[RMDB]
RNA sequence: GGGAACGACUCGAGUAGAGUCGAAAACUCGGUAUGCCAUGACCAGAACGAAUCUAAAGGUAGAUGUUCCAUUGAGGCCUUAGAGCAGGUGGUGCAUGGCUGUAGUCAGAUUGUACUGCGAGCCGAAAAUUAAAUCAUUAUUCGUAAUGAUUUAAUUAAAAGAAACAACAACAACAAC
Reactivity to 2A3 in 0.01 (KOAc 150mM, MgCl2 10mM, bicine 150mM(pH8.5), 24C), signal-to-noise 9, nucleotides 027 to 126: c020u010c010g010g010u060a040u090g010c000c000a000u000g010a010c000c000a000g040a130a040c010g020a040a050u000c000u030a060a020a020g010g000u010a010g020a120u070g050u170u060c050c020a020u030u110g040a040g060g020c000c000u000u010a000g000a010g010c080a020g030g030u010g000g000u030g050c000a000u000g000g000c000u000g000u000a000g000u000c010a010g020a250u040u120g030u090a010c000u000g020c000g020a010g000c000c000g010a070a020
Reactivity to DMS in 0.01 (KOAc 150mM, MgCl2 10mM, bicine 150mM(pH8.5), 24C), signal-to-noise 9, nucleotides 027 to 126: c050u000c010g000g010u000a060u020g010c000c000a010u000g000a050c000c000a030g010a120a090c060g000a120a120u000c010u000a040a050a050g010g020u000a110g010a080u020g000u020u020c090c070a100u020u020g010a190g010g000c010c000u000u000a030g000a030g000c160a180g010g010u010g000g010u000g000c000a010u000g000g010c010u010g010u010a020g010u010c020a130g000a140u030u020g010u020a030c000u000g000c010g010a110g010c010c000g000a030a080

Chemical mapping of a 177-nucleotide RNA with 2A3 and DMS. The reactions ran in a buffer of 150 mM KOAc, 10 mM MgCl2 and 150 mM bicine (pH 8.5), at 24 C.